An RNA of 207 nucleotides, treated with DMS and 2A3 and read out base by base. High 2A3 reactivity points to a flexible backbone, as in loops and unpaired stretches.

[RMDB]
RNA sequence: GGGAACGACUCGAGUAGAGUCGAAAAUGUUAAUACUCUAGAACAGUAGAAUCUUGAAAAUGUUUUAAGUGACAAUUAGAGAUUUAAAUUUAUGCUGACAUCCUCUGCAUGUGAUACUGAUGAGGAAAGAAAGCCAAACUGUCUUACGGUCAGUUCGCAUCAGAGUUUAAUUCGUUAAACUCUGAUGAAAAGAAACAACAACAACAAC
Reactivity to DMS in 0.01 (KOAc 150mM, MgCl2 10mM, bicine 150mM(pH8.5), 24C), signal-to-noise 4, nucleotides 027 to 156: u000g010u000u000a150a100u010a060c020u000c040u000a100g020a070a060c030a040g010u000a160g010a050a050u000c010u000u030g000a110a160a130a220u010g010u000u000u000u000a090a190g020u000g030a040c020a030a110u000u000a300g000a020g000a040u000u010u000a030a110a130u000u000u000a060u010g010c030u010g010a250c110a150u000c010c010u010c000u010g010c060a080u000g010u000g000a150u010a160c080u000g020a120u000g000a030g040g010a040a050a130g030a070a110a080g000c020c070a040a050a190c030u000g010u000c040u000u000a080c100g010g000u000c030a040g010u010u000c040g020
Reactivity to 2A3 in 0.01 (KOAc 150mM, MgCl2 10mM, bicine 150mM(pH8.5), 24C), signal-to-noise 4, nucleotides 027 to 156: u060g020u020u030a070a040u090a220c010u000c050u090a080g020a210a030c020a010g040u080a040g030a070a040u010c010u020u060g020a050a050a080a110u060g050u070u070u110u210a240a170g070u100g070a000c000a030a070u170u140a060g010a000g000a000u010u030u160a060a130a070u120u160u140a070u170g010c010u000g010a020c010a040u010c000c010u010c030u060g040c040a070u070g070u080g090a040u070a190c040u030g030a070u040g000a030g030g040a000a020a000g050a020a060a000g010c030c040a060a080a030c030u000g010u030c030u080u100a030c050g040g000u010c000a030g040u070u080c070g010